The data come from the RNA Mapping Database (RMDB), library RNAMAK. Chemical mapping of a 207-nucleotide RNA with 2A3. As a SHAPE reagent, 2A3 marks flexible, mostly unpaired nucleotides at the ribose 2'-OH. The RNA was probed in 150 mM KOAc, 10 mM MgCl2 and 150 mM bicine (pH 8.5) at 24 C.
[RMDB]
RNA sequence: GGGAACGACUCGAGUAGAGUCGAAAAUACUCCUGAUUCGUCAGGAGUAAAAAAGAUAUGGAUCGGUAGGUGCCAGCGAGGGUGAUCGGAAACGAUCACCUCGCGGUAAUACCUACCCGAUCCUAAGUCAAAAAACGACCGGUUUCGACCGGUCGAACAUACGACGAAAGUUCGCUUUCGUCGUAUGAAAAGAAACAACAACAACAAC
Reactivity to 2A3 in 0.01 (KOAc 150mM, MgCl2 10mM, bicine 150mM(pH8.5), 24C), signal-to-noise 2, nucleotides 027 to 156: u070a000c000u020c000c000u010g000a030u010u070c250g040u030c130a000g010g010a000g000u000a000a000a000a000a000a000g020a000u050a000u100g000g000a000u000c000g000g020u000a000g050g020u050g040c090c110a110g010c060g020a050g060g130g090u080g000a000u010c000g010g010a060a130a050c000g000a000u030c000a000c020c000u000c000g010c010g000g020u010a040a000u040a020c000c000u000a010c000c000c000g020a000u000c000c000u000a070a010g010u000c030a030a100a050a050a000a150c010g030a000c010c040g040g000u040u110u100c170g070a050c020c030g000g000u010c000g000a000a000